Chemical mapping of a 177-nucleotide RNA with 2A3 and DMS.
Conditions: 150 mM KOAc, 10 mM MgCl2 and 150 mM bicine (pH 8.5), 24 C.
RNA sequence: GGGAACGACUCGAGUAGAGUCGAAAAGUCCAGGGUGUGCCGUGUCCUAUUCCACCGGCGCUGGCCUGAUAUUGUAGGGGACAAUGGACGUCAGUGCUUCAGCAGGUGGCGUGCCCUUCGCGGUGGAUCUUUAUACGUGGUUCGUCACGUAUGAGGGAAAAGAAACAACAACAACAAC
Reactivity to 2A3 in 0.01 (KOAc 150mM, MgCl2 10mM, bicine 150mM(pH8.5), 24C), signal-to-noise 9, nucleotides 027 to 126: g050u000c010c000a010g010g010g010u060g010u030g010c000c010g040u050g110u070c010c010u050a100u070u020c000c000a010c000c000g020g000c010g000c010u010g010g000c000c020u080g010a010u020a010u030u020g020u020a060g000g040g010g000a010c000a010a010u020g020g020a010c010g000u010c000a000g000u000g020c000u050u060c020a090g020c010a010g040g030u020g010g010c000g010u010g010c000c000c000u000u050c070g010c020g000g010u010g010g010a030
Reactivity to DMS in 0.01 (KOAc 150mM, MgCl2 10mM, bicine 150mM(pH8.5), 24C), signal-to-noise 9, nucleotides 027 to 126: g010u020c010c010a060g000g010g020u010g010u010g010c010c010g010u020g010u010c030c030u010a140u020u010c010c010a020c020c010g000g010c040g010c020u010g000g010c020c020u020g000a230u050a020u010u000g010u000a130g010g010g000g010a300c040a040a040u010g000g010a210c260g000u000c010a010g010u010g000c010u010u030c150a100g020c100a050g000g010u020g000g010c060g000u000g000c020c010c020u000u010c080g010c040g000g010u000g000g000a040

Annotation
It was measured as part of the RMDB library OK1LIB. For 2A3, 164,396 sequencing reads were counted. For 2A3 the reverse transcriptase was SuperScript II with manganese. Values cover nucleotides 27 to 126.